[RMDB]
Structure probing data (DMS and 2A3) for a 177-nucleotide construct. 2A3 adducts were read by reverse transcription with SuperScript II with manganese. The DMS profile rests on 2,801 reads.

RNA sequence: GGGAACGACUCGAGUAGAGUCGAAAACGAACUGCCCAUUGUUGGUCAGCUCCAAUCGAUGGAUGCUGGACGAGAUUAGUGGCCCCGGUCCGGUGGGCACACUCCAGCGCAGUUUGCCGGACUUGGACCGAAAAUUAAUCUUCGGAUUAAUUUUCGGAAAAGAAACAACAACAACAAC
Reactivity to DMS in 0.01 (KOAc 150mM, MgCl2 10mM, bicine 150mM(pH8.5), 24C), signal-to-noise 2, nucleotides 027 to 126: c090g000a040a040c060u000g000c020c010c020a070u010u010g000u010u000g010g010u000c090a200g020c130u020c010c010a020a080u010c100g000a080u000g000g000a120u000g010c000u000g010g010a050c130g020a120g000a180u000u000a100g030u000g000g000c000c010c010c050g010g010u000c010c020g000g020u010g020g010g000c000a030c050a050c160u010c030c060a030g000c040g010c060a030g000u000u010u000g020c010c020g000g000a030c020u000u010g010g000a300
Reactivity to 2A3 in 0.01 (KOAc 150mM, MgCl2 10mM, bicine 150mM(pH8.5), 24C), signal-to-noise 2, nucleotides 027 to 126: c020g000a000a030c020u020g020c020c000c010a060u020u050g090u030u060g020g030u060c080a040g050c120u020c000c000a000a150u190c080g040a020u050g040g020a040u150g000c000u010g000g050a020c060g040a010g010a150u200u300a140g100u160g170g100c030c000c000c010g010g000u020c000c030g000g000u030g020g010g020c040a000c000a010c030u050c010c040a050g010c020g000c050a000g030u040u060u080g060c000c000g010g050a030c030u050u120g080g030a030